[RMDB]
RNA sequence: GGGAACGACUCGAGUAGAGUCGAAAAGCAAUGAUCGUCGAGGACAUCGGCCAGGAGCGCACCGAGGUGGUGAUCGAAGGCGAUGCCGUGACCGCCGAUCGUGUCGUGGUGCUCAACGAGCCGCAGCCACGCACCGAAAUUUCGAUUUCGGUGCGUGAAAAGAAACAACAACAACAAC
Reactivity to 2A3 in 0.01 (KOAc 150mM, MgCl2 10mM, bicine 150mM(pH8.5), 24C), signal-to-noise 3, nucleotides 027 to 126: g000c010a000a220u170g020a090u040c040g040u000c010g040a060g020g070a100c010a060u030c010g090g090c030c010a080g070g070a080g040c090g000c020a010c000c030g020a100g030g210u260g000g040u040g050a070u060c050g010a050a020g010g000c020g060a020u080g000c000c010g070u110g070a060c050c000g000c030c010g010a050u050c050g000u020g050u070c010g010u030g000g020u050g000c010u020c040a040a110c050g030a010g000c000c030g030c020a010g030c030
Reactivity to DMS in 0.01 (KOAc 150mM, MgCl2 10mM, bicine 150mM(pH8.5), 24C), signal-to-noise 3, nucleotides 027 to 126: g010c060a060a050u020g010a020u000c060g010u000c030g010a120g000g000a090c060a040u000c010g010g010c030c020a120g000g020a220g000c130g050c020a040c020c010g010a090g010g040u000g000g030u000g000a040u010c070g000a140a170g000g000c030g000a060u020g030c010c010g020u000g000a090c120c010g000c070c010g010a060u010c010g020u000g010u000c030g010u000g010g000u000g020c020u010c060a130a100c140g010a140g000c000c130g040c170a090g000c080